This 177-nucleotide RNA was probed chemically with DMS and 2A3. The DMS profile rests on 2,272 reads. Reactivities are given for positions 27 through 126. For 2A3, 1,331 sequencing reads were counted. For DMS the reverse transcriptase was MarathonRT. The reactions ran in a buffer of 150 mM KOAc, 10 mM MgCl2 and 150 mM bicine (pH 8.5), at 24 C.

[RMDB]
RNA sequence: GGGAACGACUCGAGUAGAGUCGAAAAGAGGGCACGCCCGAGCAUCCCGGGCCGGCGGUGCCGCCGGGAUCGCCGUGCUCCUACACCCCGCCGGCGGACGGUCUGCCGCGGCCGUGGGAUCCGCUGCUCGCGUGUUUAUGUUCGCAUAAACACGCGAAAAAGAAACAACAACAACAAC
Reactivity to DMS in 0.01 (KOAc 150mM, MgCl2 10mM, bicine 150mM(pH8.5), 24C), signal-to-noise 2, nucleotides 027 to 126: g020a140g030g010g050c000a000c010g000c210c120c060g040a050g050c080a110u000c000c000c000g060g010g000c230c020g010g000c030g020g040u040g010c010c010g000c010c000g000g000g000a010u020c080g030c250c040g000u000g000c000u040c030c000u010a090c160a130c110c000c000c050g050c080c000g000g000c010g000g000a100c050g000g070u070c030u050g000c030c070g020c050g000g000c040c040g000u060g010g000g020a060u020c050c030g020c020u030g020c130
Reactivity to 2A3 in 0.01 (KOAc 150mM, MgCl2 10mM, bicine 150mM(pH8.5), 24C), signal-to-noise 1, nucleotides 027 to 126: g160a040g000g020g010c010a010c030g030c050c090c010g000a030g000c000a040u000c000c000c000g010g020g020c120c010g050g020c080g220g100u230g000c030c000g000c000c000g010g000g020a030u030c000g020c020c010g020u060g010c000u040c000c000u090a070c050a080c050c020c000c030g040c020c000g020g000c000g000g000a030c000g060g000u020c090u170g090c030c020g020c020g030g040c000c000g000u170g020g030g020a060u020c020c000g020c050u030g050c020